[RMDB]
RNA sequence: GGGAACGACUCGAGUAGAGUCGAAAAGGGAAUGGUGGUUUACCCCGUUAUGAAAUGAUUACCGACCAAUAAUUGGCGAAACUCGUUUCGCGUUGGCUGCCUAAUUCAAGGAAUUAGCGUGCCUUCAAAGACAUCAAGAAGUUCGCUUCUUGAUGAAGCAAAGCAAUCUGUUCGCAGAUUGCUUUGCAAAAGAAACAACAACAACAAC
Reactivity to DMS in 0.01 (KOAc 150mM, MgCl2 10mM, bicine 150mM(pH8.5), 24C), signal-to-noise 2, nucleotides 027 to 156: g000g000g010a050a040u000g010g040u000g000g030u000u000u030a160c040c020c000c020g060u000u000a070u000g010a080a050a040u000g020a110u000u000a030c010c020g030a020c020c000a100a200u000a080a190u000u000g020g050c010g030a140a090a100c080u000c050g020u000u000u000c020g050c070g110u000u000g000g000c040u010g020c160c010u010a020a040u000u060c000a220a090g030g000a070a070u000u000a060g000c110g000u000g010c020c000u000u000c020a010a050a130g000a210c020a000u000c030a000a030g000a020a040g000u000u000c300g040c000u000u000c000u000u000g010a020u000g020a050a150
Reactivity to 2A3 in 0.01 (KOAc 150mM, MgCl2 10mM, bicine 150mM(pH8.5), 24C), signal-to-noise 3, nucleotides 027 to 156: g110g010g010a130a100u140g010g040u030g000g020u070u080u170a120c010c010c000c020g080u090u140a110u110g080a070a060a030u130g030a030u060u050a060c030c030g060a110c040c050a000a040u280a130a060u080u110g060g000c020g000a030a020a060c040u040c130g030u010u010u020c030g010c010g000u010u010g030g000c010u100g000c010c010u010a000a000u000u030c090a170a070g160g010a060a000u000u010a010g050c050g060u020g000c010c000u010u020c020a060a140a010g080a060c010a000u000c000a010a000g000a000a000g000u000u110c210g020c120u000u000c000u000u000g010a010u000g010a030a000
An RNA of 207 nucleotides, treated with DMS and 2A3 and read out base by base. DMS adducts were read by reverse transcription with MarathonRT.